[RMDB]
RNA sequence: GGGAACGACUCGAGUAGAGUCGAAAAGAUAUGGAUCACUGCUAUUAUCGGGCGAAGCAUCGAUCGUACUGGGUCGGAAACGACCUUACGGGAGCUUCGCCCGAUAAUAGCAUGUGAUCCUAAGUCACUACUGAGAGAGGUUCGCCUCUCUCAGUAGAAAAGAAACAACAACAACAAC
Reactivity to DMS in 0.01 (KOAc 150mM, MgCl2 10mM, bicine 150mM(pH8.5), 24C), signal-to-noise 1, nucleotides 027 to 126: g010a060u000a300u000g010g000a020u000c000a000c010u000g000c020u010a000u000u000a000u010c010g000g000g010c000g020a020a030g020c000a300u020c200g000a060u020c010g010u000a000c300u000g000g020g040u000c000g000g000a070a130a230c000g000a010c000c000u000u000a000c010g000g000g000a070g020c000u010u000c000g010c000c020c000g020a000u000a000a000u010a000g000c020a000u000g020u000g000a020u000c000c020u010a020a050g000u000c080a240